About this RNA
Source: RMDB library 15KLIB, as collected in RNAgym. The record gives the reactivity of an RNA of 170 nucleotides to DMS and 2A3. Conditions: 150 mM KOAc, 10 mM MgCl2 and 150 mM bicine (pH 8.5), 24 C.
[RMDB]
RNA sequence: GGGAACGACUCGAGUAGAGUCGAAAAUUCACUGGGGACGACAACUCUGGGGAGAAAAGGGAGGAUCGGAUGGGAAGAGUAUAUCCUACGGGAAUCCGCGAUCCCCUCUCACGUCCAACCCAUCCCCUCACCAGUAAGUUCGCUUACUGGAAAAGAAACAACAACAACAAC
Reactivity to DMS in 0.01 (KOAc 150mM, MgCl2 10mM, bicine 150mM(pH8.5), 24C), signal-to-noise 9, nucleotides 027 to 129: u050u050c050a070c100u030g020g010g030g010a150c170g000a070c070a110a110c130u040c070u050g020g010g040g020a030g040a040a070a070a070g000g000g010a040g000g000a050u000c050g040g030a070u040g030g010g010a050a070g030a130g000u010a090u000a050u010c000c000u050a070c080g000g010g010a120a070u040c040c020g010c070g030a130u000c000c000c000c000u000c050u000c030a110c150g010u030c020c040a030a100c040c000c030a080u030c040c030c010c030u000c090a140
Reactivity to 2A3 in 0.01 (KOAc 150mM, MgCl2 10mM, bicine 150mM(pH8.5), 24C), signal-to-noise 9, nucleotides 027 to 129: u100u040c050a030c110u040g000g000g010g020a020c040g030a020c040a130a070c070u040c060u120g030g000g050g010a050g050a030a100a030a020g050g010g000a040g010g010a030u060c030g030g030a060u090g060g010g020a070a040g060a040g120u060a040u020a050u130c010c010u030a040c080g040g000g030a030a060u020c030c010g050c030g070a080u020c000c000c030c010u000c000u000c010a080c040g020u000c010c010a030a050c010c000c000a030u070c000c000c000c000u010c010a060